[RMDB]
RNA sequence: GGGAACGACUCGAGUAGAGUCGAAAACAGAUUCAACGCUGACAAAGAACCGGUGCAUGGAGGCUGUUGCUGCCCUGAAGCGUGAGUUCUUUGCGGCACAGGCACCGUUGCUAGAAACUUCGCGGUACGAGUGGGCGAGUUUCGACUCGCCCACUCGAAAAGAAACAACAACAACAAC
Reactivity to 2A3 in 0.01 (KOAc 150mM, MgCl2 10mM, bicine 150mM(pH8.5), 24C), signal-to-noise 1, nucleotides 027 to 126: c010a010g110a010u040u180c050a010a010c100g070c100u010g090a120c050a000a010a040g000a000a040c150c000g070g050u190g040c060a050u180g060g000a020g000g110c100u070g100u300u230g040c110u060g030c040c000c010u110g040a110a000g000c000g210u150g040a200g080u000u010c000u020u020u020g000c000g090g040c010a000c030a000g060g060c040a000c000c030g000u030u070g050c000u030a020g010a180a090a100c010u020u020c000g030c040g110g070u100a100
An RNA of 177 nucleotides, treated with 2A3 and read out base by base. Values cover nucleotides 27 to 126. 2A3 adducts were read by reverse transcription with SuperScript II with manganese. 2A3 is a SHAPE reagent: it acylates the 2'-hydroxyl of flexible nucleotides of all four kinds. Conditions: 150 mM KOAc, 10 mM MgCl2 and 150 mM bicine (pH 8.5), 24 C.